[RMDB]
Conditions: 150 mM KOAc, 10 mM MgCl2 and 150 mM bicine (pH 8.5), 24 C. Structure probing data (2A3) for a 207-nucleotide construct. Reactivities are given for positions 27 through 156. For 2A3 the reverse transcriptase was SuperScript II with manganese. It was measured as part of the RMDB library OK3TST. For 2A3, 477 sequencing reads were counted.
RNA sequence: GGGAACGACUCGAGUAGAGUCGAAAAGUAGAUUCACGUUAUGUUGAAGGUUGUGUUAAACCUUCACCUUUGUCUGCGUAUUCGGAAAAUGUUGAAAUGGCUGAUAAUUAUUUUUUAGUUUCUAGUCUUGGUUCUAAUCCUAAGGCGAAGGGUGGUGGUUCAAUACGGGUUUCGACCCGUAUUGAACAAAAGAAACAACAACAACAAC
Reactivity to 2A3 in 0.01 (KOAc 150mM, MgCl2 10mM, bicine 150mM(pH8.5), 24C), signal-to-noise 2, nucleotides 027 to 156: g070u070a030g010a300u110u130c160a030c090g070u150u150a130u220g090u090u040g000a030a070g020g010u020u010g040u050g070u160u160a090a090a030c000c000u010u010c020a120c010c000u040u000u070g060u080c040u040g020c000g010u010a070u020u140c010g040g040a020a080a090a070u120g020u130u080g050a100a010a100u080g000g020c000u030g020a030u010a250a030u080u060a170u100u210u010u100u020u010a070g040u000u050u040c100u040a010g010u010c000u060u030g030g000u210u000c040u130a050a060u000c000c010u030a010a010g050g000c040g010a010a020g020g020g000u020g000g070u040g010